Source: RMDB library OK2TST, as collected in RNAgym.
Structure probing data (DMS and 2A3) for a 177-nucleotide construct.
2A3 adducts were read by reverse transcription with SuperScript II with manganese.
[RMDB]
RNA sequence: GGGAACGACUCGAGUAGAGUCGAAAACUCCGUCGCCAGGACUCGAACCUGAACUAUCUGAACCAAAAUCAGAGGUGCUGCCGAUUACACCACGACGGAUUGCACAUCGAUGUGACUUUAGACGGUGGAGGAUGAUUCCAUUCGUGGAAUCAUCCUCAAAAGAAACAACAACAACAAC
Reactivity to DMS in 0.01 (KOAc 150mM, MgCl2 10mM, bicine 150mM(pH8.5), 24C), signal-to-noise 1, nucleotides 027 to 126: c090u000c000c000g010u010c060g010c150c050a070g020g000a040c040u000c070g010a140a060c100c010u000g030a140a030c100u010a170u010c000u000g000a010a150c090c160a030a090a100a110u010c000a030g010a070g010g000u000g020c050u000g010c030c010g000a130u000u010a090c080a050c040c150a130c040g000a090c030g000g000a100u010u000g040c070a000c050a090u000c120g010a030u010g010u010g000a170c090u000u000u000a040g000a000c090g000g040u000g010
Reactivity to 2A3 in 0.01 (KOAc 150mM, MgCl2 10mM, bicine 150mM(pH8.5), 24C), signal-to-noise 2, nucleotides 027 to 126: c030u000c030c000g000u040c000g010c060c030a030g000g020a030c030u020c090g080a040a070c010c050u030g010a040a060c060u100a250u230c010u010g050a060a090c080c000a140a080a000a100u060c010a010g020a040g060g020u020g060c030u090g000c000c020g030a030u070u090a070c060a030c040c020a010c070g040a020c050g000g100a010u000u160g000c050a000c010a100u110c090g080a060u060g020u090g080a140c020u110u090u040a140g050a070c000g040g020u060g090
The DMS profile rests on 673 reads.